Description
Conditions: 150 mM KOAc, 10 mM MgCl2 and 150 mM bicine (pH 8.5), 24 C. Structure probing data (2A3) for a 207-nucleotide construct. It was measured as part of the RMDB library OK3TST.
RNA sequence: GGGAACGACUCGAGUAGAGUCGAAAAUGGAACUUCAAGACUGUAAGUAUCCUGUAGUGUCGUUGGGUCACGGUGCCUCUGCCGCUAAGAAGACAUGCGCUGCCAACUACGAAUACUUUGACCAGUUCGAACAGAUUAUCUUAAUGUUCGAUAUGGACGUGGGACAUGACUUCGGUCAUGUCCCACGAAAAGAAACAACAACAACAAC
Reactivity to 2A3 in 0.01 (KOAc 150mM, MgCl2 10mM, bicine 150mM(pH8.5), 24C), signal-to-noise 1, nucleotides 027 to 156: u070g010g000a010a000c030u050u000c000a100a000g130a300c200u240g150u300a070a000g000u000a230u150c050c030u070g060u100a060g080u030g050u130c020g000u080u000g040g000g040u090c040a030c210g000g090u050g010c110c000u010c000u040g000c000c000g000c060u060a140a020g220a060a050g000a250c000a040u040g040c010g000c050u020g000c030c000a000a000c000u050a040c060g050a050a090u030a170c130u150u150u050g130a130c000c030a120g000u090u110c000g070a000a000c000a000g100a060u040u210a120u230c070u140u300a120a030u150g000u000u090c000g000a000u020a120u180g000g020a020